Background
The record gives the reactivity of an RNA of 177 nucleotides to 2A3 and DMS.
[RMDB]
RNA sequence: GGGAACGACUCGAGUAGAGUCGAAAAGAUAUGGAUCCUAGGUGAGCUUUGAUCUUAAUCGGAAACGAUUAAGGGAGCUCCCUAGGGAUCCUAAGUCAAAAGCUACCGUCGUUCGCGACGGUAGCAAUCCAUUUGUAGUCUUCGGACUACAAAUGGAAAAAGAAACAACAACAACAAC
Reactivity to 2A3 in 0.01 (KOAc 150mM, MgCl2 10mM, bicine 150mM(pH8.5), 24C), signal-to-noise 1, nucleotides 027 to 126: g000a000u020a020u070g010g000a000u060c000c000u000a000g030g050u300g110a010g000c030u300u300u060g000a010u000c000u010u000a020a010u000c000g000g000a000a040a000c000g000a000u010u010a000a020g000g000g010a020g020c010u000c020c000c030u000a020g000g000g010a030u020c000c010u000a000a010g010u000c020a020a000a130a220g000c020u010a010c010c010g000u000c010g000u070u150c300g000c000g190a000c000g020g030u000a000g000c000a000a010
Reactivity to DMS in 0.01 (KOAc 150mM, MgCl2 10mM, bicine 150mM(pH8.5), 24C), signal-to-noise 1, nucleotides 027 to 126: g010a040u010a300u000g000g000a070u010c000c000u000a010g010g030u010g030a010g050c000u010u010u040g000a050u020c010u000u000a010a010u000c000g010g000a070a080a120c000g000a040u000u000a000a000g040g020g000a000g020c000u000c000c000c000u000a000g030g030g010a010u000c000c000u000a010a100g000u000c030a080a100a150a160g010c000u000a020c000c020g040u000c000g000u000u020c300g020c020g000a000c000g000g000u010a000g010c000a000a010

Values cover nucleotides 27 to 126. For DMS the reverse transcriptase was MarathonRT. The DMS profile rests on 1,355 reads.